About this RNA
This 177-nucleotide RNA was probed chemically with 2A3 and DMS. The DMS profile rests on 1,816 reads. The 2A3 profile rests on 1,678 reads. It was measured as part of the RMDB library OK2TST. DMS adducts were read by reverse transcription with MarathonRT.
[RMDB]
RNA sequence: GGGAACGACUCGAGUAGAGUCGAAAACGCGGAGAAUGCAGACUUUGUGGGCAAGACAAAGCAGUAUAAGUCCACGUUCCGCUCUGAGGUCCACUCCAGGAUCCGCGCGGGCCAGUCAAAGCUCGACAAGUAUUAUCGCUUUCGAGCGAUAAUACUUAAAAGAAACAACAACAACAAC
Reactivity to 2A3 in 0.01 (KOAc 150mM, MgCl2 10mM, bicine 150mM(pH8.5), 24C), signal-to-noise 2, nucleotides 027 to 126: c020g010c020g060g030a040g060a130a080u050g000c040a010g050a190c050u120u110u110g050u070g020g090g060c040a070a050g010a020c050a020a120a000g010c030a010g070u040a050u010a220a030g060u020c010c020a020c040g000u060u000c010c010g000c010u000c030u060g070a120g030g020u000c010c010a020c030u090c030c030a020g000g000a000u000c000c000g000c000g000c010g030g000g000c010c000a020g010u080c060a150a050a000g020c020u030c030g030a040c040
Reactivity to DMS in 0.01 (KOAc 150mM, MgCl2 10mM, bicine 150mM(pH8.5), 24C), signal-to-noise 3, nucleotides 027 to 126: c040g030c040g010g010a040g000a160a080u000g020c100a110g020a260c030u000u000u010g020u000g020g010g010c130a120a160g020a070c060a010a060a040g060c060a130g000u000a030u010a070a210g000u020c000c020a060c040g000u000u000c020c030g020c020u000c040u000g030a110g020g000u010c020c010a080c120u000c160c110a090g000g000a100u000c010c030g010c250g010c030g010g010g000c070c030a060g000u000c110a030a080a130g020c100u000c030g000a080c190